[RMDB]
RNA sequence: GGGAACGACUCGAGUAGAGUCGAAAAGGAUGGGCUUUAAACUCGAUGCAACAGUUCCUGGAUAUCCUAAGCUUUUCAUUACUCGUGAAGAGGCUGUAAGGCAAGUUCGAAGCUGGAUAGGCUUCGAGUAUUUCCAAGUCUUCGGACUUGGAAAUACAAAAGAAACAACAACAACAAC
Reactivity to DMS in 0.01 (KOAc 150mM, MgCl2 10mM, bicine 150mM(pH8.5), 24C), signal-to-noise 2, nucleotides 027 to 126: g020g010a120u000g020g000g000c000u000u000u000a050a160a110c000u000c060g000a010u000g020c120a070a080c140a120g020u000u000c000c000u000g030g000a110u030a060u000c010c030u010a160a070g000c000u000u000u000u020c010a020u000u010a100c260u020c140g000u000g000a070a110g000a030g010g000c080u000g000u010a060a060g000g010c300a110a090g000u010u000c000g000a010a000g000c000u000g020g030a150u000a110g010g000c000u010u000c020g000a000
Reactivity to 2A3 in 0.01 (KOAc 150mM, MgCl2 10mM, bicine 150mM(pH8.5), 24C), signal-to-noise 2, nucleotides 027 to 126: g140g040a090u220g040g000g040c000u080u010u050a090a140a040c010u000c000g010a020u080g000c130a190a030c000a110g000u000u010c000c000u000g030g040a100u100a070u120c010c040u020a070a000g010c000u030u030u030u030c000a020u010u220a110c060u050c100g020u020g090a050a020g010a040g100g020c010u050g040u040a020a040g000g010c060a140a000g030u020u040c020g000a000a000g000c010u030g010g090a160u100a120g010g000c000u000u000c000g010a000